Conditions: 150 mM KOAc, 10 mM MgCl2 and 150 mM bicine (pH 8.5), 24 C. This 177-nucleotide RNA was probed chemically with DMS and 2A3. DMS adducts were read by reverse transcription with MarathonRT. 2A3 adducts were read by reverse transcription with SuperScript II with manganese. The 2A3 profile rests on 6,169 reads. For DMS, 13,950 sequencing reads were counted.

[RMDB]
RNA sequence: GGGAACGACUCGAGUAGAGUCGAAAAUUGGGAAUGGAAGUACCCGAGGAUGUGCAAGCUUAUGUGAUGACGGAGGUGAACCGGUCGGCGCAGACUGCCCCAGCUUCUGAUUUCGGGACCCGGGAGGCAUUUAUGAAUAGUUCGCUAUUCAUAAAUGAAAAGAAACAACAACAACAAC
Reactivity to DMS in 0.01 (KOAc 150mM, MgCl2 10mM, bicine 150mM(pH8.5), 24C), signal-to-noise 8, nucleotides 027 to 126: u000u010g010g000g010a120a070u000g000g010a070a090g010u000a150c040c020c020g010a080g010g010a080u000g020u010g010c080a080a100g010c060u000u000a080u000g020u010g010a100u000g000a080c070g010g010a110g010g010u010g010a070a090c080c040g010g010u000c050g010g010c100g010c060a050g000a070c090u000g010c040c020c020c060a130g000c040u000u000c030u000g010a130u000u000u000c030g010g010g010a090c050c040c030g000g000g000a080g010g010
Reactivity to 2A3 in 0.01 (KOAc 150mM, MgCl2 10mM, bicine 150mM(pH8.5), 24C), signal-to-noise 4, nucleotides 027 to 126: u100u060g010g020g030a040a120u090g040g040a060a040g040u070a070c000c010c020g010a030g050g020a070u090g030u050g060c070a040a050g010c040u140u120a100u160g090u050g050a070u080g010a020c040g040g020a030g080g050u080g050a050a020c030c010g050g040u040c020g020g030c050g000c030a020g020a080c040u070g000c010c000c010c000a010g000c000u080u030c000u040g100a120u050u090u080c030g020g010g010a020c000c010c030g000g020g010a010g040g010